The record gives the reactivity of an RNA of 177 nucleotides to 2A3 and DMS. For 2A3, 1,939 sequencing reads were counted.
RNA sequence: GGGAACGACUCGAGUAGAGUCGAAAACGUUUUGCGAGAGCAGUUUGCCGAUGGAUUCACGAAUAGAAGGAUGCCAGCUCACGGCACGACUCACCGCGUCGUUGAGCGUCAGGCUACCGGGAGCGGCCGGUUUAUUUGAGUUCGCUCAAAUAAACCGAAAAGAAACAACAACAACAAC
Reactivity to 2A3 in 0.01 (KOAc 150mM, MgCl2 10mM, bicine 150mM(pH8.5), 24C), signal-to-noise 2, nucleotides 027 to 126: c020g000u040u040u130u120g030c030g040a080g010a030g060c060a030g020u060u120u140g060c030c020g020a040u080g070g020a030u060u100c070a050c120g060a120a090u100a280g060a150a040g030g030a020u100g040c010c010a010g010c020u010c010a010c010g000g000c020a010c020g070a070c020u080c100a080c060c020g000c000g000u000c000g000u050u070g020a000g000c030g050u090c060a040g070g000c010u010a040c000c000g010g050g020a040g010c000g030g000c000
Reactivity to DMS in 0.01 (KOAc 150mM, MgCl2 10mM, bicine 150mM(pH8.5), 24C), signal-to-noise 3, nucleotides 027 to 126: c080g000u000u000u000u010g010c050g010a160g000a140g010c060a040g020u000u020u000g030c030c020g000a180u000g020g000a080u000u000c020a070c070g030a080a080u010a090g010a140a100g010g010a130u000g000c000c030a210g000c010u000c010a030c010g010g000c010a030c010g020a120c180u000c190a080c240c000g020c090g020u010c010g020u000u010g010a010g010c000g000u010c150a020g000g000c030u000a140c040c000g010g000g000a060g020c050g010g020c070
For 2A3 the reverse transcriptase was SuperScript II with manganese. The DMS profile rests on 1,889 reads. Values cover nucleotides 27 to 126.